RNA sequence: GGGAACGACUCGAGUAGAGUCGAAAAAAGGACAGAGUGGCUCAAGGAACACGGUUACUCUGUGCAGAAGGCUAGCGUUCCGUGGAGCUGCCGGCAGUACAGAGACAAGGGUUUGCACGUGCACGCCAUAGCCGACAGCGACAUGUACUGCUACUACCACUAGCGGGUAGUUCGCUACCCGCUAGUGAAAAGAAACAACAACAACAAC
Reactivity to 2A3 in 0.01 (KOAc 150mM, MgCl2 10mM, bicine 150mM(pH8.5), 24C), signal-to-noise 2, nucleotides 027 to 156: a000a010g080g020a010c010a000g000a000g070u000g000g030c040u050c270a110a100g240g030a100a060c090a010c130g010g000u000u000a000c000u010c030u000g000u020g010c000a030g050a190a010g130g000c080u020a020g000c000g090u040u010c130c020g020u060g000g000a050g000c000u000g020c000c000g010g000c030a010g040u080a070c040a090g050a000g030a200c040a070a110g000g000g000u050u020u080g090c140a110c300g250u300g000c000a000c020g000c000c030a070u040a030g000c010c000g000a000c000a000g020c020g040a000c020a020u110g060u070a000c030u080g010c000u010a000c000u060a070c020
Source: RMDB library OK3TST, as collected in RNAgym. Structure probing data (2A3) for a 207-nucleotide construct. 2A3 adducts were read by reverse transcription with SuperScript II with manganese.